[RMDB]
RNA sequence: GGGAACGACUCGAGUAGAGUCGAAAAGACGGGGUGUUCCGUACCGUUUACUGCCACCUGCACGGUGAGCCGACCUGGAACGGUCGCAUCCUGCAUACCCACUAUGCCACCGGUCAGCAGGCCGAAGCGUACUCCACCCUUUCGAGGGUGGAGUACGAAAAGAAACAACAACAACAAC
Reactivity to DMS in 0.01 (KOAc 150mM, MgCl2 10mM, bicine 150mM(pH8.5), 24C), signal-to-noise 1, nucleotides 027 to 126: g020a160c000g000g010g000g020u020g010u000u020c120c030g020u000a050c030c000g020u010u000u010a090c090u000g010c010c030a130c010c000u040g010c150a210c240g000g050u000g000a170g020c030c100g000a080c150c160u000g020g000a090a010c060g000g010u000c070g010c040a000u000c020c030u000g010c190a080u000a070c070c010c010a120c230u000a180u000g000c040c050a060c090c020g010g020u020c020a250g020c100a110g000g000c010c020g010a100a100g030
Reactivity to 2A3 in 0.01 (KOAc 150mM, MgCl2 10mM, bicine 150mM(pH8.5), 24C), signal-to-noise 1, nucleotides 027 to 126: g060a040c010g000g000g000g000u000g050u160u020c050c000g010u020a010c010c000g030u000u010u040a100c000u040g000c020c000a000c000c000u300g060c180a050c190g000g000u000g030a040g000c010c010g020a080c030c070u120g000g040a010a000c000g000g010u000c100g000c000a030u040c000c000u010g010c040a010u060a050c000c030c000a000c050u110a070u290g040c000c000a040c070c000g000g010u100c060a120g150c070a090g110g010c000c000g040a070a020g040
An RNA of 177 nucleotides, treated with DMS and 2A3 and read out base by base.
2A3 is a SHAPE reagent: it acylates the 2'-hydroxyl of flexible nucleotides of all four kinds.
DMS adducts were read by reverse transcription with MarathonRT.
The reactions ran in a buffer of 150 mM KOAc, 10 mM MgCl2 and 150 mM bicine (pH 8.5), at 24 C.
For 2A3, 1,347 sequencing reads were counted.